Chemical mapping of a 177-nucleotide RNA with DMS and 2A3. 2A3 adducts were read by reverse transcription with SuperScript II with manganese. For DMS, 764 sequencing reads were counted. The data come from the RNA Mapping Database (RMDB), library OK2TRN. For 2A3, 845 sequencing reads were counted.
[RMDB]
RNA sequence: GGGAACGACUCGAGUAGAGUCGAAAAUGACGCGAUUGGAGGAACGAACGCGCAUAAAGUGCGAUCAGUAUUGGCCCACUCGCGGAACGGAAACCUAUGGUCAGAUCUUUGUUACCAUCACGGAGAAGCACUAGGUAGCUUUCGAGCUACCUAGUGCAAAAGAAACAACAACAACAAC
Reactivity to DMS in 0.01 (KOAc 150mM, MgCl2 10mM, bicine 150mM(pH8.5), 24C), signal-to-noise 1, nucleotides 027 to 126: u000g000a300c030g040c010g000a010u000u010g010g000a300g020g030a110a050c030g000a030a090c010g000c000g000c010a060u000a070a080a230g000u000g080c040g030a010u000c050a090g000u000a090u000u000g000g040c130c000c000a050c050u000c000g020c010g000g000a100a050c050g000g000a200a150a110c040c030u000a030u000g000g010u000c030a100g000a100u000c100u030u000u000g000u000u000a060c030c000a040u000c210a130c100g000g000a030g000a200a090
Reactivity to 2A3 in 0.01 (KOAc 150mM, MgCl2 10mM, bicine 150mM(pH8.5), 24C), signal-to-noise 1, nucleotides 027 to 126: u080g050a030c000g000c010g010a010u030u040g030g020a110g020g110a050a050c050g010a120a000c010g020c000g030c060a010u130a060a230a020g000u010g020c000g010a020u000c030a000g170u130a070u190u190g110g000c030c000c000a000c000u000c000g040c000g010g000a010a030c050g000g020a010a000a000c010c010u010a040u080g000g000u050c020a040g010a250u110c110u100u220u110g060u010u130a070c010c020a020u030c060a060c110g090g020a100g000a130a020